[RMDB]
RNA sequence: GGGAACGACUCGAGUAGAGUCGAAAAGAUAUGGACUUGGACCCGCUCUCAGGCUCAACAGCUCGGAAACGAGACAUGAGCGCAGGAGCGCCAAGUCCUAAGUCAAACUUGUGCUUCGGCACAAGAAGUAUGGCACUACGUUCGCGUAGUGCCAUACAAAAGAAACAACAACAACAAC
Reactivity to DMS in 0.01 (KOAc 150mM, MgCl2 10mM, bicine 150mM(pH8.5), 24C), signal-to-noise 2, nucleotides 027 to 126: g000a000u000a290u000g000g010a010c000u000u000g000g020a280c220c300c080g000c010u000c000u010c000a300g000g020c010u010c000a030a080c230a210g020c000u010c000g000g000a070a080a220c010g030a000g000a020c090a060u010g000a000g000c000g000c010a140g000g000a010g000c020g080c000c000a000a000g010u000c000c010u000a010a040g000u000c080a240a140a150c000u000u000g020u000g010c000u000u030c290g010g000c000a010c000a000a000g010a020a120
Reactivity to 2A3 in 0.01 (KOAc 150mM, MgCl2 10mM, bicine 150mM(pH8.5), 24C), signal-to-noise 1, nucleotides 027 to 126: g100a040u090a090u160g000g020a010c010u020u010g070g000a100c000c130c160g000c020u030c010u010c020a050g150g000c000u030c020a040a170c070a170g040c000u000c030g000g020a050a090a030c020g000a010g010a030c060a210u090g000a010g000c030g000c040a020g000g060a000g000c020g000c030c000a010a000g000u030c030c010u000a020a000g010u020c050a030a060a120c010u000u010g000u000g000c000u030u020c280g160g000c000a000c010a000a000g010a040a000